[RMDB]
RNA sequence: GGGAACGACUCGAGUAGAGUCGAAAACUCUGCAUAUUCGUAUGCAGAGAAAUAACGGUCGCCUCAUGCAGCUAGUCGAACAUGCUGCUCGACCUUUUGGUAAAAACCGGAGGUUCGCCUCCGGUAACUUUGUACAGAGUUUCGACUCUGUACAAAGAAAAGAAACAACAACAACAAC
Reactivity to DMS in 0.01 (KOAc 150mM, MgCl2 10mM, bicine 150mM(pH8.5), 24C), signal-to-noise 5, nucleotides 027 to 126: c000u000c000u000g000c000a010u000a020u000u020c170g030u000a000u000g000c000a010g000a010g000a020a080a050u010a070a090c210g000g000u000c010g040c300c090u010c120a070u010g020c000a030g010c000u000a240g000u010c190g000a070a230c150a080u000g000c020u000g010c020u000c020g010a020c010c010u010u000u000u000g010g010u010a060a050a030a090a040c000c000g000g000a030g010g010u000u010c260g010c000c000u000c000c000g020g000u000a000a010
Reactivity to 2A3 in 0.01 (KOAc 150mM, MgCl2 10mM, bicine 150mM(pH8.5), 24C), signal-to-noise 2, nucleotides 027 to 126: c000u000c000u020g000c000a000u020a030u100u060c180g130u050a010u010g000c000a000g000a000g000a010a080a000u080a010a020c050g010g020u020c010g060c070c060u170c060a070u190g000c000a000g000c000u080a060g120u230c080g100a120a050c040a030u110g000c000u000g000c000u010c010g000a010c010c000u030u090u070u090g110g040u110a040a060a020a050a020c000c000g000g020a010g020g000u050u040c150g050c030c000u000c000c030g000g000u000a000a000